The record gives the reactivity of an RNA of 207 nucleotides to 2A3 and DMS. Source: RMDB library OK3TST, as collected in RNAgym. For DMS the reverse transcriptase was MarathonRT.
RNA sequence: GGGAACGACUCGAGUAGAGUCGAAAAGAAAAUAAGAAAGGAAGAGAGAGACUGUGGCCAUGUGAUUGGAACACACGGGCACCCAUGUGGAGCCAGGAACGAAAAGCAUUGCAUUAGAAUAGUCAAGAUCAAGGUGCCUCUGGGUUGCCAUGUCACAGCCUAAUUACGUGUUCGCACGUAAUUAGGCAAAAGAAACAACAACAACAAC
Reactivity to 2A3 in 0.01 (KOAc 150mM, MgCl2 10mM, bicine 150mM(pH8.5), 24C), signal-to-noise 2, nucleotides 027 to 156: g020a020a030a010a020u160a020a010g070a070a020a020g030g010a030a050g010a020g000a040g000a000g000a050c030u050g020u030g090g000c020c020a020u050g030u000g030a090u050u130g030g020a080a000c010a000c010a010c050g010g020g000c000a030c000c030c000a050u100g060u020g020g020a010g020c030c010a040g050g040a090a010c020g030a090a090a060a000g000c010a040u070u180g020c010a030u050u080a060g080a160a030u030a030g050u130c050a040a100g030a080u120c030a040a070g040g000u030g030c030c000u000c030u050g050g000g030u030u110g090c010c010a020u080g020u000c000a000c030a050
Reactivity to DMS in 0.01 (KOAc 150mM, MgCl2 10mM, bicine 150mM(pH8.5), 24C), signal-to-noise 1, nucleotides 027 to 156: g010a030a070a130a050u000a080a090g030a040a080a080g000g030a040a060g010a040g000a110g000a080g190a010c040u010g020u030g000g070c020c010a150u000g020u000g010a070u020u010g000g000a100a080c090a010c010a020c060g000g000g000c030a020c010c000c030a120u000g140u000g010g020a090g040c010c020a080g040g050a020a140c060g000a060a110a050a040g010c060a110u010u000g010c000a090u000u020a140g000a090a150u010a090g000u030c050a100a130g060a120u000c000a090a070g060g060u000g050c090c000u010c060u020g000g020g040u000u000g070c000c090a070u020g010u000c020a040c030a140

Overview:
The reactions ran in a buffer of 150 mM KOAc, 10 mM MgCl2 and 150 mM bicine (pH 8.5), at 24 C. For 2A3, 1,076 sequencing reads were counted.